[RMDB]
RNA sequence: GGGAACGACUCGAGUAGAGUCGAAAAGAUAUGGAUCUGAACAACGACGAUCUCACUUCGGAAACGAAGUGAGGGGAGUUGAAGAUCCUAAGUCAAAGGUAACGAAGGGUUCGCCCUUCGUUACCAAUCAAGCGAGGGAGUUCGCUCCCUCGCUUGAAAAAGAAACAACAACAACAAC
Reactivity to DMS in 0.01 (KOAc 150mM, MgCl2 10mM, bicine 150mM(pH8.5), 24C), signal-to-noise 2, nucleotides 027 to 126: g000a000u000a190u000g000g010a000u010c000u000g000a200a300c090a010a000c010g010a140c260g000a120u000c010u000c000a010c000u000u000c000g010g000a040a020a080c000g010a010a010g020u000g000a000g020g000g020g020a080g020u000u020g020a170a070g000a020u000c010c000u000a000a050g020u000c000a050a100a110g000g010u010a000a010c010g000a030a010g000g010g010u000u000c290g020c020c000c000u000u000c000g010u000u000a000c000c000a060a030
This 177-nucleotide RNA was probed chemically with DMS.
Values cover nucleotides 27 to 126.